[RMDB]
RNA sequence: GGGAACGACUCGAGUAGAGUCGAAAAGAUAUGGAGCUUCACGAAUUUCCCUGUGGGAGUCGUACAACGUGUCGGAAACGACACGUAAUCGACGAAGAACACAGGGAAACUAUGAAGCUCCUAAGUCCAUAGAAGUUAACUUCGGUUAACUUCUAUGAAAAGAAACAACAACAACAAC
Reactivity to 2A3 in 0.01 (KOAc 150mM, MgCl2 10mM, bicine 150mM(pH8.5), 24C), signal-to-noise 2, nucleotides 027 to 126: g050a000u050a060u120g030g000a020g010c020u020u030c000a020c060g300a300a300u040u020u000c050c020c000u000g000u020g000g000g010a010g000u000c020g010u060a080c090a300a040c160g000u020g010u000c000g030g020a020a020a000c010g000a000c020a000c000g000u000a000a030u140c000g000a010c030g020a020a020g000a020a000c000a000c000a000g040g040g000a020a000a000c000u000a010u040g000a000a000g000c000u000c000c010u000a010a000g000u000c020
Reactivity to DMS in 0.01 (KOAc 150mM, MgCl2 10mM, bicine 150mM(pH8.5), 24C), signal-to-noise 4, nucleotides 027 to 126: g010a070u000a240u010g010g010a010g030c010u000u000c010a010c070g010a040a140u000u000u000c000c000c000u000g000u000g000g000g000a120g010u000c010g010u000a150c300a170a040c010g020u010g010u000c000g000g020a050a070a150c010g020a000c010a000c010g020u000a050a030u010c050g020a020c000g000a080a160g000a130a210c010a010c000a000g000g000g000a000a000a010c070u000a180u000g000a020a010g010c000u000c000c000u000a010a050g000u000c030